The record gives the reactivity of an RNA of 177 nucleotides to DMS and 2A3. The reactions ran in a buffer of 150 mM KOAc, 10 mM MgCl2 and 150 mM bicine (pH 8.5), at 24 C. 2A3 adducts were read by reverse transcription with SuperScript II with manganese.

RNA sequence: GGGAACGACUCGAGUAGAGUCGAAAAAUAGAGUUUAGUGGCUAUGCUUAUGGGAUAGAUGAAAAGUGCCAUGAUCUGAAGAGGGGGAGCUGUUCCGUGUCUUUCCUCUAUAUGAAAUGGCUGAACAAGCAUGGAUAAUGUUCGCAUUAUCCAUGCUAAAAGAAACAACAACAACAAC
Reactivity to DMS in 0.01 (KOAc 150mM, MgCl2 10mM, bicine 150mM(pH8.5), 24C), signal-to-noise 4, nucleotides 027 to 126: a060u030a100g010a110g000u010u010u030a060g030u020g000g010c030u010a030u000g010c050u010u010a070u020g010g000g000a050u010a050g010a080u010g010a080a070a080a090g030u030g010c000c010a010u010g010a120u020c010u000g010a160a080g000a030g010g010g000g010g010a090g010c040u010g010u010u000c060c070g000u000g000u010c010u000u010u040c000c030u000c020u000a020u020a140u000g020a030a240a020u000g000g020c000u010g010a040a130c200a070
Reactivity to 2A3 in 0.01 (KOAc 150mM, MgCl2 10mM, bicine 150mM(pH8.5), 24C), signal-to-noise 4, nucleotides 027 to 126: a000u130a010g170a050g070u170u150u050a110g030u090g130g000c020u050a020u080g030c020u060u080a080u160g020g000g040a070u070a090g070a040u060g210a030a030a070a040g160u090g070c000c000a000u040g070a230u010c010u010g030a040a010g000a040g060g000g020g000g000a040g030c000u030g120u130u120c050c050g030u040g140u040c010u040u020u120c000c000u010c000u020a070u000a010u050g010a020a050a000u010g000g000c030u010g040a060a000c080a070